Chemical mapping of a 177-nucleotide RNA with DMS and 2A3. The RNA was probed in 150 mM KOAc, 10 mM MgCl2 and 150 mM bicine (pH 8.5) at 24 C.
RNA sequence: GGGAACGACUCGAGUAGAGUCGAAAAGUUUAAAGCAUUCUUAGCAGUCGUUACUUGAUUUAAUGCAGCUUCAACUUGUGCUUUUGUCAUAUUUUGACCGUUUGCUUUAUCUAAAAUACCUUGAGCACCUAACCGAAUGGUUCGCCAUUCGGUUAGGAAAAGAAACAACAACAACAAC
Reactivity to DMS in 0.01 (KOAc 150mM, MgCl2 10mM, bicine 150mM(pH8.5), 24C), signal-to-noise 2, nucleotides 027 to 126: g020u000u000u010a020a070a060g010c030a020u000u010c030u000u000a130g000c080a080g020u010c030g010u000u000a020c060u020u010g010a060u000u000u000a060a060u000g020c030a050g000c110u000u000c090a030a030c060u010u020g060u000g000c050u010u000u000u000g020u000c030a050u000a150u000u000u000u000g000a020c210c250g000u000u000u010g000c050u000u000u000a030u020c030u000a070a070a070a100u020a030c020c030u020u020g020a110g020c180a120
Reactivity to 2A3 in 0.01 (KOAc 150mM, MgCl2 10mM, bicine 150mM(pH8.5), 24C), signal-to-noise 2, nucleotides 027 to 126: g010u000u010u150a040a040a010g000c000a030u010u000c020u020u150a020g000c080a070g100u080c010g050u050u050a030c050u050u150g090a120u190u110u190a080a050u170g020c010a050g060c000u060u060c020a060a040c030u030u080g010u030g040c000u020u000u080u080g040u000c030a020u000a090u130u040u010u100g020a030c040c020g020u020u020u040g000c020u060u020u020a030u030c000u020a040a060a100a110u100a070c030c060u010u110g100a020g040c050a030

It was measured as part of the RMDB library OK2TST.